[RMDB]
RNA sequence: GGGAACGACUCGAGUAGAGUCGAAAAGGGUGCUGCAGGAAGCAUUAGCAGCUGGACUGAGCCCAGGCACUUGUGCUGAAUGUGAUUCUGAUCUCUCCAGGCACAAAGCGGAGGGAAUCAUCUUGACCCCAACACUCACAUUCAGCUUCAGCCUCACGAGAUUUGGUAUGUUCGCAUACCAAAUCUCAAAAGAAACAACAACAACAAC
Reactivity to DMS in 0.01 (KOAc 150mM, MgCl2 10mM, bicine 150mM(pH8.5), 24C), signal-to-noise 1, nucleotides 027 to 156: g010g040g050u000g020c020u000g030c070a130g000g000a190a190g000c030a140u020u000a110g040c070a080g030c000u010g030g030a170c070u020g010a160g000c030c030c040a100g020g000c020a070c060u000u030g050u010g000c000u010g000a060a040u040g020u000g010a100u000u000c040u010g020a140u010c050u000c010u000c040c010a190g010g030c040a180c070a100a050a230g000c040g000g010a040g030g010g000a060a050u010c040a120u000c100u000u000g020a140c080c120c020c060a080a070c040a110c180u010c010a000c000a070u000u000c020a020g010c000u040u000c030a050g010c040c030u000c010a020c260
Reactivity to 2A3 in 0.01 (KOAc 150mM, MgCl2 10mM, bicine 150mM(pH8.5), 24C), signal-to-noise 2, nucleotides 027 to 156: g000g050g000u080g010c040u000g050c030a050g020g160a180a000g100c100a160u200u190a050g030c040a010g000c010u040g030g230a030c000u030g020a010g030c000c020c020a010g010g010c040a050c200u110u280g000u020g030c000u000g000a010a010u030g000u010g020a020u200u000c040u160g030a030u000c010u000c010u000c020c040a120g140g000c060a040c130a260a120a000g030c050g010g010a020g000g030g020a040a110u010c010a030u060c060u190u270g160a220c020c030c010c000a060a040c070a010c050u010c020a000c000a000u010u010c000a000g000c000u040u030c000a000g000c000c020u000c020a080c080